[RMDB]
RNA sequence: GGGAACGACUCGAGUAGAGUCGAAAAUAUAGGCUCGUACAAGCGGGGGAAGAACUUCCGGGUAGCACCCAAGAUGGUCUUGAUAAUUUGGGUUUCCGCUAGCUGCCCCUUAUCAAGAGUCUAUACAAGCGGGUCAGUUAUUCGUGGUUGGCCUGCUAAAAGAAACAACAACAACAAC
Reactivity to DMS in 0.01 (KOAc 150mM, MgCl2 10mM, bicine 150mM(pH8.5), 24C), signal-to-noise 9, nucleotides 027 to 126: u010a010u000a020g000g000c000u000c000g010u030a150c300a100a100g010c160g000g000g000g000g010a000a040g000a090a130c050u000u000c300c020g010g000g000u030a060g010c140a080c000c000c000a020a020g010a120u020g010g020u020c110u030u030g010a110u030a060a090u010u000u000g000g000g010u000u020u010c030c030g000c140u010a020g010c040u000g000c010c000c000c000u000u010a110u020c110a090a120g000a020g000u000c000u000a010u000a030c200a090
Reactivity to 2A3 in 0.01 (KOAc 150mM, MgCl2 10mM, bicine 150mM(pH8.5), 24C), signal-to-noise 9, nucleotides 027 to 126: u090a000u000a000g000g000c000u000c020g070u130a030c050a100a060g030c050g000g000g000g000g010a000a000g010a030a030c000u030u000c010c000g000g000g010u010a010g030c020a020c000c000c000a010a010g120a080u190g070g180u130c090u240u200g100a150u130a270a140u040u020u020g000g000g000u010u030u030c010c010g000c010u000a010g010c010u040g010c000c000c000c000u050u110a070u120c020a070a030g000a000g010u000c000u000a010u010a010c030a020

Structure probing data (DMS and 2A3) for a 177-nucleotide construct. The DMS profile rests on 43,004 reads. 2A3 adducts were read by reverse transcription with SuperScript II with manganese. The reactions ran in a buffer of 150 mM KOAc, 10 mM MgCl2 and 150 mM bicine (pH 8.5), at 24 C.